RNA sequence: GGGAACGACUCGAGUAGAGUCGAAAAGAUAUGGAAGUGAACUACGCUUGAAGAGGCGUUGAAAUCCUAUUAUACUCGGAAACGAGUAUAAUAGGAUGGAGCCUUGGAGGAGCGCACUUCCUAAGUCCGUUAGAUUUACCUUCGGGUAAAUCUAACGAAAAGAAACAACAACAACAAC
Reactivity to DMS in 0.01 (KOAc 150mM, MgCl2 10mM, bicine 150mM(pH8.5), 24C), signal-to-noise 1, nucleotides 027 to 126: g000a110u000a300u040g030g000a000a000g020u020g000a210a040c150u020a300c040g010c000u010u000g000a300a210g000a080g000g020c030g000u000u000g000a120a130a060u020c000c000u000a000u000u000a020u000a000c000u000c000g040g000a080a120a230c030g000a020g000u000a000u040a040a010u000a000g010g000a000u010g000g000a110g010c000c000u010u010g010g010a270g010g000a020g010c000g030c000a030c030u010u020c000c000u000a020a080g000u000c050

Chemical mapping of a 177-nucleotide RNA with DMS. For DMS the reverse transcriptase was MarathonRT. Source: RMDB library TTRINS, as collected in RNAgym. Conditions: 150 mM KOAc, 10 mM MgCl2 and 150 mM bicine (pH 8.5), 24 C.